[RMDB]
RNA sequence: GGGAACGACUCGAGUAGAGUCGAAAAGAGCGAAAGCGAAAAGUAGAGAAGCGGAUGACGAGCAUGAGGAACUCGUUAUCCACUGAACUCAUGCAAGGUGGCGCGAAUCUACGAAGAAAGAAAGAAACCGAUAACAUAAGUUCGCUUAUGUUAUCGGAAAAGAAACAACAACAACAAC
Reactivity to 2A3 in 0.01 (KOAc 150mM, MgCl2 10mM, bicine 150mM(pH8.5), 24C), signal-to-noise 9, nucleotides 027 to 126: g100a010g010c050g060a090a040a010g030c050g070a090a060a020a030g050u040a010g000a010g040a250a010g010c010g030g030a100u070g060a030c010g000a010g010c030a040u070g040a070g040g030a050a030c010u000c000g010u010u060a060u060c030c000a000c000u000g000a030a010c000u010c030a020u070g010c010a030a060g060g000u050g040g030c010g000c000g020a020a020u000c000u000a010c040g010a030a030g070a030a040a020g110a040a080a010g060a050a050a010
Reactivity to DMS in 0.01 (KOAc 150mM, MgCl2 10mM, bicine 150mM(pH8.5), 24C), signal-to-noise 7, nucleotides 027 to 126: g000a170g000c020g000a060a070a140g000c030g020a080a070a100a160g010u020a030g000a030g000a150a190g010c060g000g000a060u010g010a030c000g000a180g000c020a040u010g000a090g000g000a140a070c030u010c000g010u000u010a050u020c130c050a010c010u010g010a070a060c010u010c010a050u020g030c040a070a180g000g000u000g000g010c030g010c020g000a120a180u010c030u010a010c050g010a110a060g010a080a080a070g010a070a070a110g000a100a070a070